Annotation:
Conditions: 150 mM KOAc, 10 mM MgCl2 and 150 mM bicine (pH 8.5), 24 C. An RNA of 170 nucleotides, treated with 2A3 and DMS and read out base by base. Values cover nucleotides 27 to 129. It was measured as part of the RMDB library 15KLIB. For 2A3 the reverse transcriptase was SuperScript II with manganese.
RNA sequence: GGGAACGACUCGAGUAGAGUCGAAAAAUCCCCAACCCGCGGGCCGGCUACUCUUCUUUCCCUUCUCUCGUCUUCCUCGGUCAACCUCCGGAGUUCCUCUUCCUCCUCCUUGCUGAGUGACUUUCCUCCCGGGCAGUGUUCGCACUGCCCAAAAGAAACAACAACAACAAC
Reactivity to 2A3 in 0.01 (KOAc 150mM, MgCl2 10mM, bicine 150mM(pH8.5), 24C), signal-to-noise 3, nucleotides 027 to 129: a020u030c020c000c000c000a030a090c010c010c000g030c010g010g020g000c030c040g020g030c010u080a040c020u010c020u080u030c010u010u060u060c030c000c000u060u030c040u020c000u030c000g070u000c020u080u030c020c010u020c010g000g010u040c010a020a060c000c020u010c000c020g000g010a040g000u060u020c010c020u000c000u040u030c000c010u000c000c000u030c000c000u030u060g000c010u050g040a040g020u070g060a100c030u010u040u020c000c010u000c000c010c000
Reactivity to DMS in 0.01 (KOAc 150mM, MgCl2 10mM, bicine 150mM(pH8.5), 24C), signal-to-noise 4, nucleotides 027 to 129: a120u020c030c010c000c140a030a040c000c020c060g040c080g050g020g010c020c020g010g060c060u010a070c060u030c010u000u050c030u000u000u000c010c000c060u010u040c000u010c060u030c000g030u000c020u000u000c040c030u020c070g000g020u010c090a020a140c060c020u000c030c010g000g000a070g000u030u020c050c010u030c040u050u000c030c000u020c000c000u020c030c040u000u000g020c060u040g040a150g010u030g030a110c070u040u020u040c070c060u040c070c020c050